RNA sequence: GGGAACGACUCGAGUAGAGUCGAAAAAGCCGUCGUCACCUGCCACAAGGCAGACAUCGAACCGGCCGUCACGUUCGCCGUCGGCGAUGUCGCCGCCGCGGCUGCCGAACGCGGUCUUGAGGUCGUCGCUAAUAGCUCACUUCGGUGAGCUAUUAGCAAAAGAAACAACAACAACAAC
Reactivity to 2A3 in 0.01 (KOAc 150mM, MgCl2 10mM, bicine 150mM(pH8.5), 24C), signal-to-noise 2, nucleotides 027 to 126: a000g040c030c010g040u050c020g030u030c050a010c060c020u030g010c030c000a180c030a100a080g040g000c040a030g010a030c010a040u070c020g060a060a120c030c030g000g030c000c010g120u120c020a080c090g040u080u120c030g020c020c020g070u170c020g000g020c020g020a060u120g080u120c020g040c090c010g030c010c020g000c010g010g000c040u020g000c020c030g060a060a020c010g010c010g010g000u010c000u070u060g060a020g020g010u040c000g010u050c030
Reactivity to DMS in 0.01 (KOAc 150mM, MgCl2 10mM, bicine 150mM(pH8.5), 24C), signal-to-noise 3, nucleotides 027 to 126: a090g030c020c010g020u020c070g010u000c080a110c140c010u020g020c010c020a090c250a130a150g000g000c030a040g000a020c090a090u000c040g000a080a060c100c010g010g000c010c020g000u000c080a120c100g010u020u000c130g040c030c060g010u010c030g000g000c000g000a060u000g000u010c050g010c030c040g020c070c070g000c000g000g000c090u000g010c170c050g000a090a090c060g010c040g000g010u020c050u010u010g010a130g010g010u010c040g000u010c120